Source: RMDB library OK1LIB, as collected in RNAgym. An RNA of 177 nucleotides, treated with DMS and 2A3 and read out base by base. The RNA was probed in 150 mM KOAc, 10 mM MgCl2 and 150 mM bicine (pH 8.5) at 24 C. DMS adducts were read by reverse transcription with MarathonRT.
RNA sequence: GGGAACGACUCGAGUAGAGUCGAAAAUUCUAUUAUGAUUGGGACGAUGAUGUCUAUGAAUGUCCAACGUGUGAAGCUAUAUACCAUUCUUUGGACGAAAUAAAGAACUGGCAUGAGUGCGACCCACCAGCCAAUUAUCCUUCGGGAUAAUUGGCUGAAAAGAAACAACAACAACAAC
Reactivity to DMS in 0.01 (KOAc 150mM, MgCl2 10mM, bicine 150mM(pH8.5), 24C), signal-to-noise 1, nucleotides 027 to 126: u000u070c030u000a120u090u000a160u000g000a170u010u000g000g000g020a120c000g000a090u000g000a000u030g060u000c090u010a090u010g000a100a100u030g000u000c000c000a000a030c000g000u000g000u000g000a140a220g070c190u140a070u030a160u010a110c140c000a000u020u000c000u000u000u000g000g020a070c000g000a050a040a000u020a010a060a190g000a270a080c050u000g090g000c000a040u010g000a100g000u000g010c020g000a050c020c030c000a000c180
Reactivity to 2A3 in 0.01 (KOAc 150mM, MgCl2 10mM, bicine 150mM(pH8.5), 24C), signal-to-noise 2, nucleotides 027 to 126: u060u000c110u060a150u140u200a300u210g160a040u150u170g000g000g000a080c120g020a050u140g000a070u140g050u000c000u010a030u230g080a140a030u180g000u000c000c000a000a010c000g030u000g000u010g010a020a050g010c140u000a000u020a000u060a300c020c000a010u020u030c010u000u000u000g000g000a030c050g000a000a010a070u260a010a020a000g080a130a000c090u040g020g000c000a000u080g020a040g080u180g020c040g020a040c060c000c000a000c000